[RMDB]
RNA sequence: GGGAACGACUCGAGUAGAGUCGAAAAGAUAUGGAGACAUACUCGCCCAGGACUAUUCGGAAACGAACGAAUCCUGGGAACUACGAGAUGUCUCCUAAGUCAAAACAGAAAGCUUCGGCUUUCUGAAGAUUAAUAUACAGUUCGCUGUAUAUUAAUCAAAAGAAACAACAACAACAAC
Reactivity to 2A3 in 0.01 (KOAc 150mM, MgCl2 10mM, bicine 150mM(pH8.5), 24C), signal-to-noise 5, nucleotides 027 to 126: g030a020u070a030u170g010g010a010g000a010c000a010u220a300c010u000c000g010c000c010c000a000g020g010a010c140u170a040u040u020c010g020g050a120a120a100c040g030a060a010c060g070a120a230u000c000c000u010g000g060g010a000a010c040u210a020c020g000a000g010a010u010g000u010c000u000c000c000u000a000a000g000u000c010a000a010a080a100c000a000g010a000a000a010g000c030u120u180c300g120g000c010u010u070u000c000u010g000a020a000
Reactivity to DMS in 0.01 (KOAc 150mM, MgCl2 10mM, bicine 150mM(pH8.5), 24C), signal-to-noise 4, nucleotides 027 to 126: g000a030u000a300u010g010g000a040g000a020c000a010u000a140c010u000c010g000c000c000c000a000g000g000a020c080u000a260u000u000c000g010g000a140a110a150c040g010a010a020c090g000a090a090u000c000c000u000g000g010g000a010a010c090u010a300c010g000a020g000a030u000g000u000c010u000c000c000u000a000a060g010u010c030a090a090a120a260c010a010g010a010a010a010g010c010u000u010c210g040g010c000u000u000u000c000u000g010a040a100